[RMDB]
RNA sequence: GGGAACGACUCGAGUAGAGUCGAAAACAUAAGGAAGUGCGUAGACAAAGAGGGCAGAAAACUGAGCCGCAAGACACAAGGCUAUGACAGUCCUGACAAUAACAGUGAUGUGUCUAGUGUUUCCGGACACUUGCAGAUACUUCGGUAUCUGCAAGUGAAAAGAAACAACAACAACAAC
Reactivity to DMS in 0.01 (KOAc 150mM, MgCl2 10mM, bicine 150mM(pH8.5), 24C), signal-to-noise 3, nucleotides 027 to 126: c050a090u010a090a090g000g000a080a080g020u000g000c060g050u010a060g040a070c090a050a080a120g010a080g020g000g040c030a020g000a060a050a080a050c110u010g000a090g010c040c020g010c090a080a060g010a070c120a040c090a090a040g000g000c020u010a070u010g020a070c100a070g000u010c030c020u000g000a100c100a090a080u010a090a100c110a050g010u020g020a090u000g020u010g030u000c010u010a110g020u000g000u000u000u000c000c030g010g000a300
Reactivity to 2A3 in 0.01 (KOAc 150mM, MgCl2 10mM, bicine 150mM(pH8.5), 24C), signal-to-noise 3, nucleotides 027 to 126: c030a030u140a100a050g050g020a030a050g050u040g060c040g050u100a020g030a060c030a010a030a030g060a070g060g000g000c040a020g110a050a110a010a050c050u090g000a010g030c040c020g030c100a030a010g060a020c030a000c010a130a000g010g020c000u010a050u210g040a010c040a010g030u010c010c000u050g020a050c080a130a110u140a190a010c010a020g080u040g190a060u080g000u010g020u040c010u000a050g060u010g020u040u010u030c010c000g020g000a000

Structure probing data (DMS and 2A3) for a 177-nucleotide construct. For 2A3 the reverse transcriptase was SuperScript II with manganese. The reactions ran in a buffer of 150 mM KOAc, 10 mM MgCl2 and 150 mM bicine (pH 8.5), at 24 C. High DMS reactivity at an A or C suggests that its Watson-Crick edge is free. The 2A3 profile rests on 2,489 reads.